[RMDB]
RNA sequence: GGGAACGACUCGAGUAGAGUCGAAAAGAUGCGGCCAGCCGCAUCCACAACAGCCUUCAUGGGAAUACGAUACCAAUGGCUUCCCACUCAGGUGCGGAAGUCGACUCACCGCCGUUACCACGACCCCCGUGGUACUCGGUUUCGACCGAGUACCACGAAAAGAAACAACAACAACAAC
Reactivity to DMS in 0.01 (KOAc 150mM, MgCl2 10mM, bicine 150mM(pH8.5), 24C), signal-to-noise 1, nucleotides 027 to 126: g000a080u000g000c040g020g120c110c220a220g020c000c050g000c000a020u000c000c290a130c130a120a110c210a080g000c000c020u000u000c020a140u000g000g000g000a000a170u000a000c300g000a020u020a200c090c030a140a140u000g020g000c000u000u000c000c000c000a000c020u020c150a000g000g000u020g000c040g000g020a050a050g000u000c090g010a020c000u000c060a000c020c010g000c190c040g000u010u000a020c000c020a030c040g000a070c010c000c000c090
Reactivity to 2A3 in 0.01 (KOAc 150mM, MgCl2 10mM, bicine 150mM(pH8.5), 24C), signal-to-noise 3, nucleotides 027 to 126: g020a000u030g020c010g000g040c070c100a030g140c030c000g010c000a000u010c010c030a090c030a040a050c030a010g050c000c020u100u120c070a120u090g000g010g060a050a020u150a160c070g070a020u060a110c000c030a070a070u080g010g000c000u010u010c000c020c000a010c010u110c050a070g090g080u010g060c140g000g050a030a010g030u020c040g040a040c000u030c060a030c020c000g040c000c000g030u020u030a040c000c040a010c060g060a090c000c000c000c000
Conditions: 150 mM KOAc, 10 mM MgCl2 and 150 mM bicine (pH 8.5), 24 C.
An RNA of 177 nucleotides, treated with DMS and 2A3 and read out base by base.
2A3 adducts were read by reverse transcription with SuperScript II with manganese.
DMS adducts were read by reverse transcription with MarathonRT.
The DMS profile rests on 1,253 reads.
It was measured as part of the RMDB library OK1LIB.